Description: The data come from the RNA Mapping Database (RMDB), library M2PK50. An RNA of 177 nucleotides, treated with 2A3 and DMS and read out base by base. The reactions ran in a buffer of 150 mM KOAc, 10 mM MgCl2 and 150 mM bicine (pH 8.5), at 24 C. The 2A3 profile rests on 40,645 reads.

RNA sequence: GGGAACGACUCGAGUAGAGUCGAAAACUUCUACGCUUCGGCGUAGAAGAAAGGUGUUUGUCGCUCCACCAAAAUCGAAGCGAUAAAAAGUACGAAAGUACUAAACGCGAAUCUUCGGAUUCGCGAAGUAUAACGAUAAGUUCGCUUAUCGUUAUACAAAAGAAACAACAACAACAAC
Reactivity to 2A3 in 0.01 (KOAc 150mM, MgCl2 10mM, bicine 150mM(pH8.5), 24C), signal-to-noise 9, nucleotides 027 to 126: c000u000u000c000u000a000c010g010c010u030u070c240g150g000c000g000u000a000g000a000a000g000a020a020a000g000g000u010g010u020u090u130g020u010c000g000c010u010c010c000a000c010c030a190a040a010a030u160c070g080a100a000g000c000g000a000u020a010a090a020a000a000g010u000a000c020g040a120a030a030g000u010a010c020u060a060a110a010c010g010c000g010a000a000u000c010u040u130c250g100g000a000u000u000c000g000c000g000a010a000
Reactivity to DMS in 0.01 (KOAc 150mM, MgCl2 10mM, bicine 150mM(pH8.5), 24C), signal-to-noise 7, nucleotides 027 to 126: c000u000u000c000u000a000c000g010c000u000u020c190g020g020c000g020u000a000g000a000a000g000a040a060a080g000g020u000g010u000u000u000g020u000c000g020c000u000c010c000a020c010c000a140a070a020a010u000c160g010a050a040g060c000g010a020u010a030a060a090a090a020g010u000a000c000g000a120a070a190g000u000a000c000u000a010a080a190c010g010c000g010a010a000u000c000u000u010c170g020g000a010u000u000c000g010c000g000a000a040